[RMDB]
RNA sequence: GGGAACGACUCGAGUAGAGUCGAAAAGGAAGAUUAUCAGGUUACACGGCAAGCAAUGCUGCCGGGUUUUGCUCAGGAACAUGCUGCGGAGCGUUAUCGGAUUAUCUCUGAGUGAUUCUUGUCAUGCCGCGUCACCAGUAUUCGUACUGGUGACGCGAAAAGAAACAACAACAACAAC
Reactivity to DMS in 0.01 (KOAc 150mM, MgCl2 10mM, bicine 150mM(pH8.5), 24C), signal-to-noise 1, nucleotides 027 to 126: g020g000a140a080g020a030u010u000a040u000c040a010g010g020u000u010a040c050a150c020g010g000c010a040a090g000c060a110a130u010g000c080u000g010c000c030g010g000g000u000u000u000u000g010c060u000c040a070g010g000a050a050c060a050u000g000c020u000g010c050g010g010a070g010c070g010u000u000a030u000c040g020g010a070u010u010a050u020c050u010c010u010g010a090g020u000g010a060u010u000c050u000u000g020u000c110a060u010g020c150
Reactivity to 2A3 in 0.01 (KOAc 150mM, MgCl2 10mM, bicine 150mM(pH8.5), 24C), signal-to-noise 1, nucleotides 027 to 126: g070g040a090a080g000a050u100u020a020u110c040a060g000g050u010u000a030c030a020c070g040g000c100a120a010g030c040a100a280u160g000c020u020g060c030c000g020g010g040u090u060u050u070g060c040u000c040a010g040g000a030a010c020a030u100g000c000u050g020c060g050g050a060g040c030g040u100u050a080u090c010g000g000a040u040u050a040u030c030u000c010u020g010a000g140u060g020a040u040u030c030u080u050g120u140c020a020u040g060c040